[RMDB]
RNA sequence: GGGAACGACUCGAGUAGAGUCGAAAAGAUAUGGACAAGAACUACGCAGAAAUAAAGCGAAGAACUCGGAAACGAGGGAGCUUUAUAAUGCGCUUGUCCUAAGUCAAAAGAAGGCUUCGGCCUUCAAGCUUGUAGUAUGGUUCGCCAUACUACAAGCAAAAGAAACAACAACAACAAC
Reactivity to 2A3 in 0.01 (KOAc 150mM, MgCl2 10mM, bicine 150mM(pH8.5), 24C), signal-to-noise 2, nucleotides 027 to 126: g010a010u080a040u120g000g000a000c010a010a010g020a160a100c140u190a040c220g000c020a000g020a020a300a010u040a010a000a000g020c000g200a300a010g000a090a020c000u000c010g030g060a080a060a030c010g000a010g020g000g030a000g000c000u000u000u000a020u010a020a020u020g030c000g020c020u000u000g000u000c000c000u010a040a020g020u000c020a020a000a000a220g010a000a010g010g000c030u110u180c300g160g020c040c000u000u030c000a000a010
Reactivity to DMS in 0.01 (KOAc 150mM, MgCl2 10mM, bicine 150mM(pH8.5), 24C), signal-to-noise 2, nucleotides 027 to 126: g000a070u000a300u000g000g000a000c000a020a020g000a130a060c120u000a270c030g020c000a000g000a140a080a000u000a010a020a000g010c010g010a080a090g020a140a180c000u000c000g000g000a130a080a200c000g000a010g000g000g020a080g000c000u010u000u000a000u000a030a290u000g000c020g010c010u000u000g000u000c000c000u010a040a050g000u000c030a060a060a110a090g000a000a010g000g010c000u000u010c200g000g020c000c000u020u000c000a070a080